[RMDB]
RNA sequence: GGGAACGACUCGAGUAGAGUCGAAAAGACUUGUGGUUCGCCACAAGUCAAAUAAGCAUGUAGAAAUGGCCAAACUACAUGGAUCGAAAGAAAGGCCAUAAAAAAGGACAUGCUUCGGCAUGUCCAAGUGGUGCAAGUAGUUCGCUACUUGCACCACAAAAGAAACAACAACAACAAC
Reactivity to 2A3 in 0.01 (KOAc 150mM, MgCl2 10mM, bicine 150mM(pH8.5), 24C), signal-to-noise 1, nucleotides 027 to 126: g010a000c030u000u000g000u000g000g040u060u090c180g030c080c000a000c000a000a000g020u000c000a000a000a000u000a000a000g070c020a000u010g000u000a000g010a030a070a000u000g000g000c000c000a040a050a020c040u000a000c030a010u010g060g030a110u150c120g050a080a060a120g130a090a160a050g060g030c040c000a000u040a010a030a000a000a010a060g000g000a000c000a000u000g000c000u000u050c130g050g000c000a010u000g000u000c000c000a010a020
Source information: This 177-nucleotide RNA was probed chemically with 2A3. The data come from the RNA Mapping Database (RMDB), library M2PK50. As a SHAPE reagent, 2A3 marks flexible, mostly unpaired nucleotides at the ribose 2'-OH. Conditions: 150 mM KOAc, 10 mM MgCl2 and 150 mM bicine (pH 8.5), 24 C.